[RMDB]
RNA sequence: GGGAACGACUCGAGUAGAGUCGAAAAUUACCUCCCUUCGGGGAGGUAAACUGAACGCUGCAAGCGGCAGCGCGCUCGCUUGCGCACACACGCACAAUAAAUGCAGUAUGCACUUCGGUGCAUACAAUUGUUCUGUAUUCUUCGGAAUACAGAACAAAAAAGAAACAACAACAACAAC
Reactivity to 2A3 in 0.01 (KOAc 150mM, MgCl2 10mM, bicine 150mM(pH8.5), 24C), signal-to-noise 2, nucleotides 027 to 126: u030u000a000c010c000u030c040c000c000u000u040c210g050g020g020g000a030g000g000u000a000a000a000c010u010g060a080a030c080g030c140u200g000c020a010a000g000c000g080g030c000a060g270c040g040c060g000c110u110c070g040c000u000u020g000c010g010c000a000c000a000c010a010c030g060c010a030c010a100a230u130a200a130a020u100g010c010a000g020u000a000u000g000c000a000c020u040u030c180g080g000u020g020c010a020u010a010c000a010a020
Reactivity to DMS in 0.01 (KOAc 150mM, MgCl2 10mM, bicine 150mM(pH8.5), 24C), signal-to-noise 3, nucleotides 027 to 126: u000u000a010c000c000u000c000c000c000u000u020c170g040g020g010g020a020g000g000u000a000a000a080c070u000g040a120a140c160g020c080u020g030c010a040a040g030c030g000g000c040a160g010c170g000c200g010c040u000c010g020c040u010u000g000c000g000c000a140c140a050c170a080c140g000c030a070c110a100a060u000a080a040a140u010g020c050a090g000u000a000u010g010c000a000c000u000u020c160g030g010u000g000c000a000u000a000c000a060a070
Description: Structure probing data (2A3 and DMS) for a 177-nucleotide construct. The reactions ran in a buffer of 150 mM KOAc, 10 mM MgCl2 and 150 mM bicine (pH 8.5), at 24 C. 2A3 adducts were read by reverse transcription with SuperScript II with manganese.